[RMDB]
RNA sequence: GGGAACGACUCGAGUAGAGUCGAAAAUCGUUUUGCAGAACAAUGAGUUGAUGCCUCAGAAGUUGAGAACUCAGGUAGUCAAUAGUGGCUCAGAUAUGAAUUGUAAUACUCCUACCCAGUGUUAUUAUGACCUUAGUAUUUUCGAAUACUAAGGUCAAAAAGAAACAACAACAACAAC
Reactivity to 2A3 in 0.01 (KOAc 150mM, MgCl2 10mM, bicine 150mM(pH8.5), 24C), signal-to-noise 2, nucleotides 027 to 126: u090c050g000u080u050u050u070g100c020a020g010a090a020c040a080a080u020g020a020g080u080u060g020a010u080g040c000c030u050c030a110g050a190a030g040u180u230g090a090g010a080a010c020u000c050a010g060g010u080a020g070u070c010a000a070u060a140g060u070g050g000c000u000c060a030g030a060u050a060u130g120a080a020u090u080g000u030a010a020u000a050c000u000c020c020u050a040c020c000c000a050g000u040g020u150u020a040u080u060a120
Reactivity to DMS in 0.01 (KOAc 150mM, MgCl2 10mM, bicine 150mM(pH8.5), 24C), signal-to-noise 8, nucleotides 027 to 126: u000c090g020u010u000u000u010g020c080a090g000a090a080c070a080a100u010g010a080g020u010u000g000a070u000g000c090c010u010c150a080g000a100a080g010u010u000g010a180g010a090a100c040u000c060a040g010g010u000a040g010u000c040a040a060u010a100g020u010g000g010c030u000c030a050g000a080u010a070u010g010a070a090u000u000g010u000a030a050u010a050c040u000c040c020u000a160c030c020c030a100g000u000g010u000u000a070u010u010a150

Structure probing data (2A3 and DMS) for a 177-nucleotide construct. It was measured as part of the RMDB library OK2TRN. DMS adducts were read by reverse transcription with MarathonRT. The 2A3 profile rests on 1,199 reads.